Source: RMDB library M2PK50, as collected in RNAgym. Structure probing data (2A3 and DMS) for a 177-nucleotide construct. Reactivities are given for positions 27 through 126. The 2A3 profile rests on 914 reads. The RNA was probed in 150 mM KOAc, 10 mM MgCl2 and 150 mM bicine (pH 8.5) at 24 C. As a SHAPE reagent, 2A3 marks flexible, mostly unpaired nucleotides at the ribose 2'-OH.
RNA sequence: GGGAACGACUCGAGUAGAGUCGAAAAUCGUGACAAUUCGUUGUCACGAAACAUUAUGUGGUGAAAUAUAAAAGCCGAAAUCCCGAUACCAUAUAAUAUAAAGAAUGGAUAGUUUCGACUAUCCAAAACUUCAUAUUAUAUUCGUAUAAUAUGAAGUAAAAGAAACAACAACAACAAC
Reactivity to 2A3 in 0.01 (KOAc 150mM, MgCl2 10mM, bicine 150mM(pH8.5), 24C), signal-to-noise 1, nucleotides 027 to 126: u000c000g000u000g000a000c020a000a010u030u090c170g010u060u030g020u000c020a010c000g010a040a020a000c050a020u000u010a060u080g000u020g010g040u020g080a040a210a050u220a050u070a140a210a080a040g080c090c040g050a100a030a030u040c060c000c000g010a040u040a110c010c000a020u000a000u020a010a040u080a030u070a110a200a030g130a260a040u170g000g010a000u000a010g010u010u030u140c060g020a010c000u000a000u000c000c000a130a000a000
Reactivity to DMS in 0.01 (KOAc 150mM, MgCl2 10mM, bicine 150mM(pH8.5), 24C), signal-to-noise 2, nucleotides 027 to 126: u000c000g030u010g000a010c000a030a040u000u010c170g020u010u010g000u000c000a000c000g000a010a090a130c070a030u000u000a020u000g020u000g010g000u000g000a110a120a100u020a150u010a080a070a090a080g010c080c050g030a090a120a150u000c010c010c000g000a110u010a010c000c000a000u000a020u000a030a010u000a120u020a100a090a120g010a090a120u000g000g010a010u000a000g010u000u000u020c120g000a040c000u000a010u000c000c000a010a030a070